[RMDB]
RNA sequence: GGGAACGACUCGAGUAGAGUCGAAAACGAGCGAUGGAUCGAGAUAUUCUCGACCGUAUCUUAAGCGGAGGUACAAAAGACUAGCGCGCUAGCCGAGCCGAGUAGGCAGGCUUGGCUGAUACUAGGCUCUAGGGAUGCGCUUCGGUGCAUCUCUAGAAAAAGAAACAACAACAACAAC
Reactivity to DMS in 0.01 (KOAc 150mM, MgCl2 10mM, bicine 150mM(pH8.5), 24C), signal-to-noise 9, nucleotides 027 to 126: c090g000a080g010c060g020a070u020g010g000a100u000c000g000a020g010a160u060a100u040u020c000u010c010g000a030c020c020g010u000a020u010c030u010u010a080a090g010c040g010g000a060g010g010u010a040c090a070a070a080a070g000a070c010u000a030g000c170g010c090g010c050u010a030g010c000c000g000a050g000c000c000g000a120g010u030a080g000g040c060a230g000g000c000u000u010g010g000c010u000g000a100u030a080c020u000a030g000g000c080
Reactivity to 2A3 in 0.01 (KOAc 150mM, MgCl2 10mM, bicine 150mM(pH8.5), 24C), signal-to-noise 9, nucleotides 027 to 126: c040g010a020g050c040g040a050u110g020g050a190u030c010g010a000g010a030u120a090u300u090c010u000c000g020a010c000c000g010u010a040u030c030u060u100a070a010g020c020g030g030a030g020g040u060a040c030a030a100a000a000g060a040c010u020a010g020c040g000c000g020c090u020a000g000c000c000g010a010g000c000c000g020a040g110u190a060g070g060c060a020g000g000c000u010u020g000g000c000u000g000a010u020a080c030u020a010g060g000c010

Conditions: 150 mM KOAc, 10 mM MgCl2 and 150 mM bicine (pH 8.5), 24 C. The record gives the reactivity of an RNA of 177 nucleotides to DMS and 2A3. For DMS, 57,512 sequencing reads were counted. 2A3 adducts were read by reverse transcription with SuperScript II with manganese. It was measured as part of the RMDB library OK1LIB. The 2A3 profile rests on 50,605 reads. DMS adducts were read by reverse transcription with MarathonRT.